Chemical mapping of a 307-nucleotide RNA with DMS.
Source: RMDB library POS240, as collected in RNAgym.
The reactions ran in a buffer of 150 mM KOAc, 10 mM MgCl2 and 150 mM bicine (pH 8.5), at 24 C.
RNA sequence: GGGAACGACUCGAGUAGAGUCGAAAAAGUCCACUGGCGUACUUACGAGUACGCCAGUGGACAGGCAACUUGCCUCCGAUUGGGGGUGCUGUUUAUGUACGAACUUAUGUCUUUGGUUAUUGCCCCACUUUUUGUGGGUCUAGUAAUCUUACUAGUUGACCAUUGGUUAGAUGAUUAGCAGAUAACCAUGCAAGUUGUCCUAGCCCACACGUCUAUCCGCAAGACGAAAAAAGUAGGAUGAGCGAGGUACGCCUCGCUCAUCCUACAAUUGCCCAUUCGUGGGCAAUAAAAGAAACAACAACAACAAC
Reactivity to DMS in 0.01 (KOAc 150mM, MgCl2 10mM, bicine 150mM(pH8.5), 24C), signal-to-noise 2, nucleotides 027 to 266: a160g030u010c030c010a010c000u000g020g020c040g030u000a000c020u010u000a090c170g030a040g040u000a000c010g040c030c020a020g040u020g010g030a010c000a000g000g000c020a020a020c070u020u000g010c000c110u000c080c060g010a170u040u030g020g020g010g000g040u010g020c030u010g000u000u010u030a050u000g030u000a120c090g000a060a080c060u020u010a090u010g010u010c110u000u000u000g000g000u000u000a020u010u010g000c260c000c000c000a020c010u010u010u020u040u010g030u000g010g000g010u000c010u000a020g000u000a010a110u020c140u020u000a020c010u000a010g000u000u000g000a060c060c010a030u000u000g000g010u010u010a020g010a070u020g000a140u000u000a010g020c170a070g010a070u010a020a030c010c050a030u000g000c000a010a030g010u000u000g010u000c000c040u020a140g010c000c010c060a140c160a060c020g010u010c000u000a070u000c090c150g040c140a120a020g000a010c010g010a000a060a060a040a090a070g000u000a000g000g030a060u000g030a050g080c050g060a040g060g060u010a070c230g010c040c010u000c040g100c040u000c010a000u000c050c000u000a000c000a030